The data come from the RNA Mapping Database (RMDB), library OK2TRN. This 177-nucleotide RNA was probed chemically with DMS and 2A3. 2A3 adducts were read by reverse transcription with SuperScript II with manganese. For DMS, 661 sequencing reads were counted. For 2A3, 1,046 sequencing reads were counted. The RNA was probed in 150 mM KOAc, 10 mM MgCl2 and 150 mM bicine (pH 8.5) at 24 C.
RNA sequence: GGGAACGACUCGAGUAGAGUCGAAAAUCACACUGAUGCUAUCAGAAUGAUGAGUUCGAGAAAGUUUAUGGAGGACACUGUCAUCAUCGAUGAGGAAUGGAUCAACAACAACAUAGCAGAAGUAGUAGUUAAGGCAUCCGUUCGCGGAUGCCUUAACAAAAGAAACAACAACAACAAC
Reactivity to DMS in 0.01 (KOAc 150mM, MgCl2 10mM, bicine 150mM(pH8.5), 24C), signal-to-noise 1, nucleotides 027 to 126: u010c090a160c100a070c010u000g020a220u000g000c070u010a070u020c030a150g040a220a020u000g000a030u040g000a240g030u020u000c030g020a290g030a100a090a140g010u010u000u010a100u010g000g000a250g000g030a080c000a090c070u010g000u000c000a060u020c070a030u000c170g010a100u020g000a120g060g000a060a040u000g000g000a000u000c010a000a070c020a010a040c090a020a070c090a030u000a010g000c000a020g010a260a080g010u000a080g010u000a120
Reactivity to 2A3 in 0.01 (KOAc 150mM, MgCl2 10mM, bicine 150mM(pH8.5), 24C), signal-to-noise 2, nucleotides 027 to 126: u130c000a040c000a000c080u010g010a010u020g060c030u090a060u010c000a020g100a300a030u040g000a000u000g010a010g070u010u080c100g040a070g060a150a100a060g040u190u200u070a190u210g110g020a050g070g060a030c020a000c200u110g120u080c030a050u030c010a020u080c090g080a050u120g040a010g050g050a120a030u140g070g000a040u070c000a030a060c010a010a030c020a020a020c010a090u040a030g000c000a000g010a050a000g020u070a020g060u020a000